[RMDB]
RNA sequence: GGGAACGACUCGAGUAGAGUCGAAAACUAUUAUCAAUGAAGGUAAUAGAAUAUAUUUUCGAAGAAUUGAUUGAGUUAUUAACAUGUAACCUCUUAUUAUUUGUGCAAAAGGAAUGUUAUCCCAGGCUAGCCUAGGAAAGUUCGCUUUCCUAGGCUAAAAAGAAACAACAACAACAAC
Reactivity to 2A3 in 0.01 (KOAc 150mM, MgCl2 10mM, bicine 150mM(pH8.5), 24C), signal-to-noise 4, nucleotides 027 to 126: c030u040a040u140u000a000u000c000a020a200u170g140a260a070g000g000u030a010a010u010a000g150a130a000u190a030u030a020u030u040u050u030c040g010a080a030g090a260a010u070u090g020a060u050u090g050a090g090u040u060a050u140u050a070a020c040a030u120g050u140a070a090c000c010u040c030u050u090a130u140u040a150u210u240u140g130u100g050c060a070a040a000a000g030g020a100a030u020g000u010u040a040u030c000c000c000a000g060g030c030
Reactivity to DMS in 0.01 (KOAc 150mM, MgCl2 10mM, bicine 150mM(pH8.5), 24C), signal-to-noise 2, nucleotides 027 to 126: c000u010a000u020u000a020u000c000a110a060u040g020a170a140g000g000u020a000a000u000a000g000a180a050u040a040u020a100u000u000u000u000c030g000a030a060g000a070a030u030u020g000a030u020u000g000a030g000u030u000a080u010u010a050a110c150a040u070g010u020a060a080c020c030u010c070u000u010a020u030u010a070u040u020u050g000u010g000c130a030a090a130a020g000g020a020a000u000g000u020u000a050u020c000c010c000a110g000g030c170

Overview: Source: RMDB library OK1LIB, as collected in RNAgym. The record gives the reactivity of an RNA of 177 nucleotides to 2A3 and DMS. Values cover nucleotides 27 to 126. 2A3 is a SHAPE reagent: it acylates the 2'-hydroxyl of flexible nucleotides of all four kinds. The 2A3 profile rests on 1,876 reads.